This 177-nucleotide RNA was probed chemically with 2A3 and DMS.
2A3 adducts were read by reverse transcription with SuperScript II with manganese.
The 2A3 profile rests on 2,477 reads.
DMS adducts were read by reverse transcription with MarathonRT.
[RMDB]
RNA sequence: GGGAACGACUCGAGUAGAGUCGAAAAGAAAUUAUUUCAACUGUACACUUAUAGCCUACGUACUGUGAUUCACUUAGACGUAUUCUAUACUAACGUGGAUUACAAAUCGACGUUCAAGUGAAAGAAAGGCUUUACUAUACUUCGGUAUAGUAAAGCCAAAAGAAACAACAACAACAAC
Reactivity to 2A3 in 0.01 (KOAc 150mM, MgCl2 10mM, bicine 150mM(pH8.5), 24C), signal-to-noise 4, nucleotides 027 to 126: g070a000a110a010u230u150a090u040u130u060c050a080a060c050u070g120u150a010c010a010c010u070u060a030u120a240g020c000c060u100a030c010g000u000a030c100u020g000u000g010a020u020u020c010a020c010u010u010a010g020a050c040g040u050a040u120u200c080u090a100u090a120c000u030a010a010c090g000u010g040g000a000u000u030a020c020a010a100a040u080c040g060a040c000g020u030u070c040a060a010g000u030g050a060a060a030g110a040a070a000
Reactivity to DMS in 0.01 (KOAc 150mM, MgCl2 10mM, bicine 150mM(pH8.5), 24C), signal-to-noise 1, nucleotides 027 to 126: g030a000a030a190u040u000a100u000u020u020c020a050a190c100u000g000u070a120c040a000c050u000u010a030u000a220g000c060c080u000a000c180g000u000a060c140u000g000u030g000a040u020u000c020a050c030u000u000a030g000a160c220g000u010a000u020u090c190u030a010u070a070c030u010a020a030c100g030u000g000g030a070u000u000a050c010a000a020a010u040c050g000a080c030g000u010u000c230a030a000g000u000g040a020a030a050g020a140a160a130